[RMDB]
RNA sequence: GGGAACGACUCGAGUAGAGUCGAAAACGCAGAGGGUUCUGAUAACAAAGAACCUAGAUAGCCGCAUCGGUAUUAUUGGAUGUAGUCGGUGAGCCGGAAUGCCUGCAUCGUAAGCCUAUAAGUAAAUUUAAGUGUAAUCACUUCGGUGAUUACACAAGAGAGCAUACGUGUUCGCACGUAUGCUCUCAAAAGAAACAACAACAACAAC
Reactivity to 2A3 in 0.01 (KOAc 150mM, MgCl2 10mM, bicine 150mM(pH8.5), 24C), signal-to-noise 1, nucleotides 027 to 156: c050g020c010a060g020a100g080g040g000u010u000c020u010g030a080u090a140a020c060a010a120a020g000a000a000c010c000u020a020g050a100u050a000g050c020c020g040c090a070u060c140g060g000u050a060u230u030a040u020u200g050g030a010u020g050u080a020g050u060c030g000g000u030g060a060g020c020c000g020g030a060a000u120g060c000c000u010g030c000a000u020c100g030u030a000a050g000c000c020u090a090u100a270a070g090u090a040a070a230u220u140u100a130a040g000u000g000u020a000a000u010c000a000c000u030u050c130g040g000u000g010a000u000u000a010c000a000c000a010a010